This 177-nucleotide RNA was probed chemically with DMS and 2A3.
For DMS, 1,245 sequencing reads were counted.
The data come from the RNA Mapping Database (RMDB), library OK1LIB.
For DMS the reverse transcriptase was MarathonRT.

RNA sequence: GGGAACGACUCGAGUAGAGUCGAAAAAUACAACCAAAACAAGAUAAUAAGCUGCUUUGUGGUGAAUAUUGGCUGCAGAUCCCGUGGACCAACAAUCCACGUGGUGUGCGGGGAUCUCCUUUUUGUAUAGCUGGUAAAUCUUCGGAUUUACCAGCUAAAAAGAAACAACAACAACAAC
Reactivity to DMS in 0.01 (KOAc 150mM, MgCl2 10mM, bicine 150mM(pH8.5), 24C), signal-to-noise 1, nucleotides 027 to 126: a010u010a000c120a190a060c030c000a130a080a060a050c120a030a070g000a070u030a110a080u060a100a130g100c030u020g030c170u020u000u000g000u000g000g020u000g010a140a240u030a030u020u030g040g000c030u000g000c030a050g000a010u020c000c020c000g020u000g000g000a050c010c030a070a100c300a170a300u000c040c000a000c010g000u020g020g000u000g000u000g000c020g000g050g040g000a060u020c050u010c030c170u000u000u000u000u000g000u040a090
Reactivity to 2A3 in 0.01 (KOAc 150mM, MgCl2 10mM, bicine 150mM(pH8.5), 24C), signal-to-noise 3, nucleotides 027 to 126: a000u040a040c020a000a080c010c020a000a010a010a080c090a040a070g010a140u100a170a000u090a220a160g020c010u050g030c090u080u150u210g060u090g090g000u030g000a140a010u050a080u140u070g120g000c000u050g030c030a020g040a200u050c000c010c010g000u000g010g000a010c030c010a060a080c210a100a060u000c020c000a000c030g050u060g000g000u100g000u000g010c000g000g000g040g030a070u070c020u060c020c010u020u140u020u030u110g110u050a060